[RMDB]
RNA sequence: GGGAACGACUCGAGUAGAGUCGAAAAGGUCUGAUCUUCGGAUCAGACCAACUGUGAUUCCCAAUAGCUGCGUAUCUUGGCUAAGACGGAUAGGCGUUGCCACUCAGGGGGGUUUCGACCCCCCUAAAUCAAUUCACCAAUUCGUUGGUGAAUUGAUAAAAGAAACAACAACAACAAC
Reactivity to DMS in 0.01 (KOAc 150mM, MgCl2 10mM, bicine 150mM(pH8.5), 24C), signal-to-noise 3, nucleotides 027 to 126: g010g000u000c000u000g000a000u000c010u000u010c210g020g010a010u000c000a010g010a010c010c000a010a020c140u000g010u010g010a240u000u000c000c000c000a130a140u010a050g010c030u010g020c090g010u000a050u010c030u000u000g020g000c060u010a070a120g000a090c080g010g000a060u010a050g000g010c010g020u000u000g010c040c080a080c210u000c130a030g010g010g010g010g020g000u000u000u010c180g010a050c000c010c000c000c000c000u000a000a030
Reactivity to 2A3 in 0.01 (KOAc 150mM, MgCl2 10mM, bicine 150mM(pH8.5), 24C), signal-to-noise 1, nucleotides 027 to 126: g020g000u020c000u000g000a000u000c010u010u090c240g100g010a000u010c010a010g000a000c000c000a010a000c010u080g030u050g080a070u030u030c020c010c070a020a020u110a000g030c040u040g020c030g050u030a020u060c020u090u220g100g060c030u090a090a030g030a020c020g040g000a030u050a060g080g050c030g130u270u060g110c060c010a070c040u050c020a020g020g020g030g000g000g000u020u000u060c050g030a060c000c010c090c000c010c000u000a010a010